This 177-nucleotide RNA was probed chemically with DMS and 2A3. The RNA was probed in 150 mM KOAc, 10 mM MgCl2 and 150 mM bicine (pH 8.5) at 24 C.

RNA sequence: GGGAACGACUCGAGUAGAGUCGAAAAAUGUAUGGUAUUCCGCAUAUUGGCUUUGCGAAGUCGAUAUGGACAGGACAUAGUUAAAUUGCAAAUAACUAUGCAAGUAUUACUAUUUCCCAGAACGUUAAUCUCCUUCAUGAUUCGUCAUGAAGGAGAUAAAAGAAACAACAACAACAAC
Reactivity to DMS in 0.01 (KOAc 150mM, MgCl2 10mM, bicine 150mM(pH8.5), 24C), signal-to-noise 7, nucleotides 027 to 126: a040u010g010u010a010u000g000g010u000a030u000u000c050c010g000c010a000u000a000u000u000g000g000c000u000u000u000g050c150g010a020a020g020u000c000g000a010u000a000u000g000g000a150c000a140g000g000a110c010a010u000a000g010u000u000a000a060a090u030u030g010c300a120a110a090u000a010a010c000u000a000u000g000c060a090a110g000u010a050u030u010a020c030u000a040u010u000u000c010c000c010a180g010a090a110c230g010u010u020a070
Reactivity to 2A3 in 0.01 (KOAc 150mM, MgCl2 10mM, bicine 150mM(pH8.5), 24C), signal-to-noise 7, nucleotides 027 to 126: a000u170g020u100a030u030g040g010u030a050u050u050c000c000g020c020a000u000a000u000u010g010g000c010u020u040u060g110c270g120a000a010g000u000c000g010a000u000a000u000g000g020a040c030a100g010g000a010c000a000u000a000g000u000u020a040a140a180u190u190g070c050a000a050a120u020a010a030c000u000a010u020g010c020a030a060g060u080a080u110u040a010c020u020a030u020u020u000c000c010c010a010g080a040a020c100g020u050u130a050

2A3 adducts were read by reverse transcription with SuperScript II with manganese. Reactivities are rounded to 0.1 and cut off at 0 and 3. Values cover nucleotides 27 to 126.